The record gives the reactivity of an RNA of 177 nucleotides to 2A3. Source: RMDB library OK1LIB, as collected in RNAgym.
RNA sequence: GGGAACGACUCGAGUAGAGUCGAAAAGGUGUCUACCAAUCCAAUAACACGAUCGUUCAUCCUAAUCUGGCACUGCUAGGCAAUCUGAUCAUGGAAGAUUUGGCUGCGGACUUUGAUUUAGACCCAACCACUGCGGGAGGUUCGCCUCCCGCAGUGGAAAAGAAACAACAACAACAAC
Reactivity to 2A3 in 0.01 (KOAc 150mM, MgCl2 10mM, bicine 150mM(pH8.5), 24C), signal-to-noise 2, nucleotides 027 to 126: g030g010u070g030u090c040u010a080c020c040a020a060u020c030c030a060a030u120a080a030c070a010c040g020a070u070c020g080u060u070c010a080u140c000c000u110a240a130u030c020u030g000g040c000a050c280u100g000c040u080a020g000g000c010a050a000u060c070u120g060a110u020c020a020u050g070g060a050a030g030a080u030u090u030g060g010c000u040g000c070g020g050a060c000u000u090u040g070a060u020u060u020a030g030a080c000c000c000a000a090